[RMDB]
An RNA of 177 nucleotides, treated with DMS and 2A3 and read out base by base. 2A3 adducts were read by reverse transcription with SuperScript II with manganese. Conditions: 150 mM KOAc, 10 mM MgCl2 and 150 mM bicine (pH 8.5), 24 C. Reactivities are given for positions 27 through 126.
RNA sequence: GGGAACGACUCGAGUAGAGUCGAAAAGAAAGAAAGAAAGAGGCCUCCAUGCUCCUAGUCCCUUCCUUGAAGGGUCGGAUAAGUCACAUGACGAGCCUCAAGCAAGGGACUUUGAGCUGGUGGCUAACAUAAUACGGCAUUUCGAUGCCGUAUUAUGAAAAGAAACAACAACAACAAC
Reactivity to DMS in 0.01 (KOAc 150mM, MgCl2 10mM, bicine 150mM(pH8.5), 24C), signal-to-noise 9, nucleotides 027 to 126: g010a100a080a110g000a080a070a120g010a060a070a110g010a150g000g000c000c000u000c010c000a020u030g010c000u000c000c020u000a020g010u000c000c000c000u000u000c300c010u000u000g010a060a050g000g000g000u000c000g000g000a080u010a090a130g020u020c250a130c230a080u010g000a120c010g000a020g000c000c000u000c000a000a010g010c260a010a010g000g000g000a010c000u000u000u000g000a010g020c010u000g000g000u000g000g010c000u000a000a060
Reactivity to 2A3 in 0.01 (KOAc 150mM, MgCl2 10mM, bicine 150mM(pH8.5), 24C), signal-to-noise 9, nucleotides 027 to 126: g100a010a060a010g100a040a090a010g110a030a110a010g160a040g040g010c000c000u010c010c010a080u280g000c000u000c000c000u000a000g000u000c010c000c010u000u000c020c000u030u010g050a140a110g010g020g040u020c000g000g000a030u070a100a050g150u170c080a060c040a180u220g060a050c010g000a010g150c000c000u000c000a000a000g000c000a000a000g000g000g000a000c000u000u000u000g000a000g000c000u000g000g000u010g000g000c000u000a010a000